Structure probing data (DMS) for a 177-nucleotide construct. The reactions ran in a buffer of 150 mM KOAc, 10 mM MgCl2 and 150 mM bicine (pH 8.5), at 24 C. Source: RMDB library RFMREP, as collected in RNAgym.
RNA sequence: GGGAACGACUCGAGUAGAGUCGAAAAGCCAGCAAGUUGAAUUCACCAUUGAAAAUGGUGCGAAAGGCCCAGCAGCUGCUAACGUAACUGCAAUCUAAGCUUAAUUGCUUAACUGAUUUUCUAAAGCGAUUUAAUCACGGUUCGCCGUGAUUAAAUCAAAAGAAACAACAACAACAAC
Reactivity to DMS in 0.01 (KOAc 150mM, MgCl2 10mM, bicine 150mM(pH8.5), 24C), signal-to-noise 1, nucleotides 027 to 126: g020c100c020a050g000c150a030a100g010u000u020g000a120a110u010u000c000a050c010c020a010u000u030g020a070a070a040a040u010g040g060u010g020c110g000a000a040a080g000g000c040c060c050a180g010c020a030g010c020u020g000c020u010a100a070c160g010u020a050a050c020u010g020c080a120a020u000c130u000a050a060g000c000u000u000a060a100u030u020g030c010u000u000a020a110c180u010g000a090u020u000u000u000c060u010a020a100a080g010c240